[RMDB]
RNA sequence: GGGAACGACUCGAGUAGAGUCGAAAAAGCUGGUAUCGUGAGUACAAGAAGGUCCUGGAAUUCUUACCACUUUGAGCCCAUUGAUGUCACCUUAACUGCUCUCUUGCAUUGCCCUGUCACAGGAUGCGAUGUUACUUGGUUUCGACCAAGUAACAUCAAAAGAAACAACAACAACAAC
Reactivity to 2A3 in 0.01 (KOAc 150mM, MgCl2 10mM, bicine 150mM(pH8.5), 24C), signal-to-noise 4, nucleotides 027 to 126: a020g020c080u040g000g020u040a020u130c050g040u060g060a070g010u080a040c040a120a030g100a050a040g110g020u030c020c010u040g050g040a050a060u110u060c020u040u030a050c030c000a040c050u050u030u090g040a030g020c000c000c040a020u020u140g090a070u080g060u050c000a020c040c000u040u080a050a050c020u030g000c010u010c000u000c000u050u050g020c030a030u010u100g040c020c020c000u040g030u130c040a030c020a100g060g040a050u070g040c050
Reactivity to DMS in 0.01 (KOAc 150mM, MgCl2 10mM, bicine 150mM(pH8.5), 24C), signal-to-noise 6, nucleotides 027 to 126: a030g020c150u000g010g020u000a040u000c080g010u010g010a090g010u000a070c120a050a100g020a080a080g000g010u000c030c020u000g000g000a110a110u000u000c040u000u010a080c020c030a060c060u000u010u000g010a160g020c040c020c010a130u000u000g010a070u010g000u000c040a050c040c030u000u010a070a100c070u000g010c040u000c040u000c040u010u000g000c060a070u000u010g000c040c020c020u000g010u000c100a070c080a060g000g000a090u000g010c180
The record gives the reactivity of an RNA of 177 nucleotides to 2A3 and DMS.
2A3 adducts were read by reverse transcription with SuperScript II with manganese.
The RNA was probed in 150 mM KOAc, 10 mM MgCl2 and 150 mM bicine (pH 8.5) at 24 C.
The data come from the RNA Mapping Database (RMDB), library OK2TST.